Source information:
An RNA of 177 nucleotides, treated with DMS and 2A3 and read out base by base. High 2A3 reactivity points to a flexible backbone, as in loops and unpaired stretches. The data come from the RNA Mapping Database (RMDB), library M2PK50. Reactivities are given for positions 27 through 126.
RNA sequence: GGGAACGACUCGAGUAGAGUCGAAAAGCGGUACACUUCGGUGUACCGCAAAACCGGUAUAAACAUGGGCCCAUGAGCCGAAACGGAAGGGCGUCCGCCCAAAAACGACGCCGUUCGCGGCGUCGAAGGAUAUUAGUCCGUUCGCGGACUAAUAUCCAAAAGAAACAACAACAACAAC
Reactivity to DMS in 0.01 (KOAc 150mM, MgCl2 10mM, bicine 150mM(pH8.5), 24C), signal-to-noise 1, nucleotides 027 to 126: g020c000g000g040u010a000c000a010c030u000u000c250g020g020u030g000u000a040c000c000g010c000a000a010a120a150c040c020g020g030u020a110u000a160a060a080c100a090u010g000g000g000c000c040c040a090u010g000a160g000c070c030g000a020a090a060c080g000g000a030a050g000g000g030c030g000u010c080c080g030c000c000c020a050a070a080a070a210c010g000a000c000g050c010c010g020u010u000c160g030c010g010g020c000g000u000c000g000a010a070
Reactivity to 2A3 in 0.01 (KOAc 150mM, MgCl2 10mM, bicine 150mM(pH8.5), 24C), signal-to-noise 1, nucleotides 027 to 126: g000c010g040g000u000a000c000a010c020u000u110c240g010g000u010g020u030a000c000c000g040c000a000a000a000a000c050c000g000g050u290a150u110a140a130a020c060a100u070g030g060g040c000c050c020a080u170g050a050g050c080c050g030a160a050a050c090g050g040a040a060g090g080g030c020g010u040c050c090g000c000c020c000a000a110a010a000a000c020g020a000c000g000c020c000g050u050u050c190g000c010g030g000c030g000u000c000g000a000a010